The data come from the RNA Mapping Database (RMDB), library RFM100. This 177-nucleotide RNA was probed chemically with 2A3 and DMS. The reactions ran in a buffer of 150 mM KOAc, 10 mM MgCl2 and 150 mM bicine (pH 8.5), at 24 C. For DMS the reverse transcriptase was MarathonRT.
RNA sequence: GGGAACGACUCGAGUAGAGUCGAAAACUAUAGUCCUUUUCUAAACGCGUGGCCGGUGCAGCUGCCCGCUGGCGCUUGCGAGCGUGCACAGGCCUACAUCCAGGGUCAUAGGUGGGGAGCGGAUCCCUACCACGUUGUACUUCGGUACAACGUGGUAAAAAGAAACAACAACAACAAC
Reactivity to 2A3 in 0.01 (KOAc 150mM, MgCl2 10mM, bicine 150mM(pH8.5), 24C), signal-to-noise 2, nucleotides 027 to 126: c050u100a060u160a150g030u030c010c000u040u080u080u010c070u130a140a110a040c070g010c020g070u050g020g000c010c000g000g000u020g010c010a040g000c050u160g030c020c000c010g000c000u010g050g000c030g010c070u020u040g000c010g020a010g000c010g030u030g000c030a010c000a020g000g000c000c000u000a000c000a030u000c060c040a040g000g000g060u020c010a060u070a060g020g030u040g010g010g000g040a010g000c020g050g010a110u040c000c020c000
Reactivity to DMS in 0.01 (KOAc 150mM, MgCl2 10mM, bicine 150mM(pH8.5), 24C), signal-to-noise 2, nucleotides 027 to 126: c060u010a040u030a100g020u020c010c030u000u010u030u030c050u010a070a160a070c120g030c100g010u010g020g000c000c000g000g010u010g000c030a090g020c100u050g020c000c040c020g030c000u010g000g020c050g010c100u000u010g040c000g000a060g000c000g010u030g020c020a010c040a030g010g000c000c010u000a020c020a080u030c090c040a070g000g000g000u040c030a060u010a080g010g010u030g010g000g020g000a050g020c070g030g000a090u000c000c000c000